[RMDB]
RNA sequence: GGGAACGACUCGAGUAGAGUCGAAAAAGUUCGACAGUGAAUUGCCCGUCCUGCGGCAGGCGAUGUUCCGCAAUAUCCAGGUUUCCCAGCACUUUUAAUCUGGCGGUUAAUGCGACUCCGGCAUCCGGUACCAUGAACAGUUCGCUGUUCAUGGUACAAAAGAAACAACAACAACAAC
Reactivity to DMS in 0.01 (KOAc 150mM, MgCl2 10mM, bicine 150mM(pH8.5), 24C), signal-to-noise 3, nucleotides 027 to 126: a090g010u000u000c050g010a120c110a110g010u000g000a030a050u010u000g020c030c010c010g010u000c060c070u000g030c100g020g020c080a040g030g000c060g020a070u000g010u000u010c040c040g000c060a090a120u010a080u010c070c010a050g000g000u000u000u000c010c030c020a130g020c120a050c080u000u000u000u000a060a080u000c030u010g010g010c160g010g000u010u000a060a070u000g010c050g000a070c040u010c060c030g010g030c020a070u000c040c070g020